The record gives the reactivity of an RNA of 207 nucleotides to 2A3 and DMS. The RNA was probed in 150 mM KOAc, 10 mM MgCl2 and 150 mM bicine (pH 8.5) at 24 C. DMS adducts were read by reverse transcription with MarathonRT.
[RMDB]
RNA sequence: GGGAACGACUCGAGUAGAGUCGAAAAUGGGGACAGAAGCUGACAGUGGCACUCACAGCACAGGCUUGUUAUGGGUCUAGCAGCCUCUGUGGCAUCUCCUGUCACAUUGGGAAAAUGAAGAAUUCCAGGACAUGGGCUUGGAGGGCGCCGGUGGAGCCCACCUUUAACUUUUCGAAGUUAAAGGUGGAAAAGAAACAACAACAACAAC
Reactivity to 2A3 in 0.01 (KOAc 150mM, MgCl2 10mM, bicine 150mM(pH8.5), 24C), signal-to-noise 5, nucleotides 027 to 156: u080g000g010g030g000a010c010a030g060a080a020g050c050u070g050a040c010a030g030u060g010g020c030a030c080u110c020a050c020a020g040c050a060c030a090g070g020c030u100u070g040u100u110a120u210g070g010g020u020c030u030a020g020c030a010g010c000c010u000c020u000g000u010g020g010c010a060u040c030u000c050c020u000g000u010c010a010c010a060u020u070g020g000g000a040a090a050a090u120g040a040a110g040a060a060u130u030c040c020a030g030g030a020c030a080u090g000g050g000c020u060u080g010g010a000g030g010g000c060g020c060c030g040g000u040g010g030a020g020c000
Reactivity to DMS in 0.01 (KOAc 150mM, MgCl2 10mM, bicine 150mM(pH8.5), 24C), signal-to-noise 3, nucleotides 027 to 156: u020g000g010g020g010a110c020a070g000a030a220g010c080u000g010a060c030a090g030u000g010g030c210a080c080u000c070a080c110a090g020c080a080c090a120g030g030c020u000u010g040u020u010a080u000g020g010g010u010c050u000a130g030c050a120g010c000c010u000c040u000g030u010g010g010c010a040u000c040u010c040c000u000g020u000c010a030c010a140u000u000g000g010g000a040a060a050a110u010g000a120a120g000a120a160u000u000c020c000a120g000g010a060c050a110u000g000g020g000c030u000u010g040g000a080g030g020g010c050g030c000c010g010g000u000g010g000a150g000c150
For DMS, 6,156 sequencing reads were counted. Source: RMDB library OK3TST, as collected in RNAgym.